The record gives the reactivity of an RNA of 177 nucleotides to DMS and 2A3.
For DMS the reverse transcriptase was MarathonRT.

[RMDB]
RNA sequence: GGGAACGACUCGAGUAGAGUCGAAAAGCGGUUGCCCGUGAGGCGUCGUGGCGCGUGCUGGGUCAGAAGCACUACCCAGUGCAGAUUAUGGGUGGUGCUGCGUUGCACUUUGGCAACGUAGCCGAGACGAUCGGCUUCAAUUCGUUGAAGCCGAUCGAAAAGAAACAACAACAACAAC
Reactivity to DMS in 0.01 (KOAc 150mM, MgCl2 10mM, bicine 150mM(pH8.5), 24C), signal-to-noise 3, nucleotides 027 to 126: g020c040g020g000u000u010g030c050c010c040g020u000g020a180g020g010c030g020u000c030g030u020g010g010c020g000c050g020u000g030c020u000g020g020g040u010c080a110g020a150a070g020c020a030c020u010a040c010c000c010a070g000u000g010c150a110g000a120u010u000a070u000g000g000g020u000g010g000u000g000c000u000g010c060g010u010u000g000c080a120c140u000u000u000g040g010c010a030a040c010g030u000a030g020c020c000g020a140g000a120
Reactivity to 2A3 in 0.01 (KOAc 150mM, MgCl2 10mM, bicine 150mM(pH8.5), 24C), signal-to-noise 1, nucleotides 027 to 126: g090c040g040g030u150u170g040c000c010c030g080u090g030a110g000g070c040g020u050c050g010u120g050g000c030g000c040g020u020g000c010u040g000g000g000u040c050a020g030a090a000g040c000a010c010u020a000c000c000c010a010g030u080g010c060a030g050a240u210u120a030u190g020g000g030u020g020g000u060g000c020u020g000c020g060u020u030g030c020a040c000u130u170u230g120g000c020a080a000c030g000u010a030g000c000c000g000a050g010a030